[RMDB]
RNA sequence: GGGAACGACUCGAGUAGAGUCGAAAAUUGCUCUCAGAAUUAAGGAAUGAGAUUCAAACUCUGCGAGAACAAAUAGAGCACCACCCCAGAGUUGCAAAGUAUGCUAUGGAAAAUCAUUCCCUCAGGGAUCCCGAAGAAUAUUCGUAUUCUUCGGGAUAAAAGAAACAACAACAACAAC
Reactivity to 2A3 in 0.01 (KOAc 150mM, MgCl2 10mM, bicine 150mM(pH8.5), 24C), signal-to-noise 2, nucleotides 027 to 126: u040u030g040c000u000c000u010c040a070g160a120a210u180u120a190a120g010g020a050a040u020g000a000g040a030u050u010c030a050a050a030c000u040c010u000g070c050g070a060g060a150a030c070a060a190a100u170a040g100a010g020c050a030c030c040a040c020c000c000c020a010g020a000g010u050u050g000c000a040a090a060g200u070a160u090g000c000u080a150u250g090g060a010a030a000a000u000c000a010u010u020c000c000c010u010c060a000g090g020g040
Reactivity to DMS in 0.01 (KOAc 150mM, MgCl2 10mM, bicine 150mM(pH8.5), 24C), signal-to-noise 5, nucleotides 027 to 126: u010u010g020c060u010c020u000c120a160g010a130a100u010u010a120a120g010g000a040a010u010g010a020g010a300u000u010c020a140a080a040c040u000c000u000g000c140g000a080g000a060a060c100a050a040a120u000a100g010a090g010c050a070c090c070a120c020c010c020c010a040g010a040g000u000u010g000c030a040a060a140g020u010a100u000g010c020u010a100u010g010g000a030a020a070a160u000c030a050u000u000c000c010c050u010c150a070g000g000g000